[RMDB]
RNA sequence: GGGAACGACUCGAGUAGAGUCGAAAAGAUAGAUAGUACUCGUAAAAACUCUCUUUCGCAGGCCGCGUAUUUUGAGAGACGAAGCCGUGAAGUAGCGAAAGCUACGACGAAGCGCGUGAGCGGCCGAUGCGCGAACAGCAUCAGGUACGAGUACGAAGAUGACGAUGGGAUUCGUCCCAUCGUCAUCAAAAGAAACAACAACAACAAC
Reactivity to 2A3 in 0.01 (KOAc 150mM, MgCl2 10mM, bicine 150mM(pH8.5), 24C), signal-to-noise 1, nucleotides 027 to 156: g100a040u180a020g110a050u050a040g000u000a000c000u000c020g010u000a020a000a020a130a100c020u060c020u000c130u070u050u090c100g000c110a050g000g000c070c030g010c040g030u060a240u040u150u140u170g010a020g000a010g000a030c050g080a060a040g000c000c000g030u100g090a230a000g000u000a000g030c000g040a150a010a020g010c000u000a020c000g020a000c050g040a070a050g050c050g010c000g040u000g050a020g010c000g000g040c030c020g040a040u010g040c090g000c050g020a040a010c030a090g010c000a040u110c080a050g010g060u000a000c000g020a000g060u000a000c000g010a030a000